[RMDB]
Record summary
An RNA of 170 nucleotides, treated with 2A3 and DMS and read out base by base. DMS adducts were read by reverse transcription with MarathonRT. 2A3 adducts were read by reverse transcription with SuperScript II with manganese. The DMS profile rests on 13,000 reads. The reactions ran in a buffer of 150 mM KOAc, 10 mM MgCl2 and 150 mM bicine (pH 8.5), at 24 C.
RNA sequence: GGGAACGACUCGAGUAGAGUCGAAAAUGAGGCUUUCGAGAAAUUCGUAAGUCUCUUUGCUACUUUAAUGACUUUUUCUGGUAAUGUAGAUCUUGAUGCGUUAGCUAGUGAUAUUUUUGACACUCCUCCACGUCGGUGUUCGCACCGACGAAAAGAAACAACAACAACAAC
Reactivity to 2A3 in 0.01 (KOAc 150mM, MgCl2 10mM, bicine 150mM(pH8.5), 24C), signal-to-noise 5, nucleotides 027 to 129: u140g000a000g000g000c010u000u010u050c020g010a000g070a050a280a120u180u000c010g000u010a000a000g000u010c000u000c000u010u020u000g000c000u010a060c020u070u080u160a110a090u130g080a110c000u070u050u050u030u010c030u030g050g030u130a080a070u070g050u070a040g010a090u010c010u030u080g040a020u060g030c030g030u010u100a010g040c040u020a030g040u030g070a070u020a190u090u080u030u010u060g010a010c000a020c030u020c000c010u000c010c010a070
Reactivity to DMS in 0.01 (KOAc 150mM, MgCl2 10mM, bicine 150mM(pH8.5), 24C), signal-to-noise 2, nucleotides 027 to 129: u070g030a030g030g020c030u020u000u030c000g020a030g010a140a180a160u090u010c010g030u010a000a000g020u020c000u030c040u000u000u000g000c090u030a000c090u000u030u070a060a100u060g050a000c100u000u000u000u000u000c050u050g010g030u040a070a050u060g050u020a040g000a040u000c060u050u010g030a070u040g050c010g030u040u050a050g020c100u040a070g040u010g030a060u000a030u000u000u000u000u000g010a070c050a080c090u020c020c020u000c020c130a110